This 177-nucleotide RNA was probed chemically with 2A3 and DMS.
The reactions ran in a buffer of 150 mM KOAc, 10 mM MgCl2 and 150 mM bicine (pH 8.5), at 24 C.
Values are in units of 0.01, from 0 to 300, in steps of 10.

RNA sequence: GGGAACGACUCGAGUAGAGUCGAAAACGUCGAACCCAUCUUCAGCGCCGCCGAACGCCGCACUGGCGUCGUAGCCUUCGUUGAGUUCGAUAACGCGCACAGCGUCAGGCCACAGCGAGACGCCACGUCAUGCCCUGCAUUUCGAUGCAGGGCAUGAAAAAGAAACAACAACAACAAC
Reactivity to 2A3 in 0.01 (KOAc 150mM, MgCl2 10mM, bicine 150mM(pH8.5), 24C), signal-to-noise 4, nucleotides 027 to 126: c050g040u030c020g010a060a050c000c020c010a060u020c030u140u080c030a050g010c020g000c010c020g010c020c000g050a070a020c030g040c000c000g080c070a100c110u120g010g000c000g020u020c010g010u020a010g000c000c010u020u010c010g010u000u040g030a070g050u010u060c030g040a160u090a280a070c060g010c000g030c030a050c010a100g000c010g040u030c070a020g030g000c000c030a080c010a030g060c030g020a050g010a020c010g000c020c010a000c030g040
Reactivity to DMS in 0.01 (KOAc 150mM, MgCl2 10mM, bicine 150mM(pH8.5), 24C), signal-to-noise 2, nucleotides 027 to 126: c140g000u010c030g010a060a180c010c000c000a100u040c050u010u030c060a030g000c110g030c000c040g000c040c040g010a130a040c060g000c030c010g020c090a140c120u000g010g000c000g000u000c060g010u010a230g000c050c000u000u070c100g020u000u000g000a070g010u000u000c000g030a190u060a080a110c110g000c090g000c040a080c090a160g000c000g010u010c100a120g030g020c010c110a070c160a060g030c060g000a190g030a040c050g000c000c020a020c220g000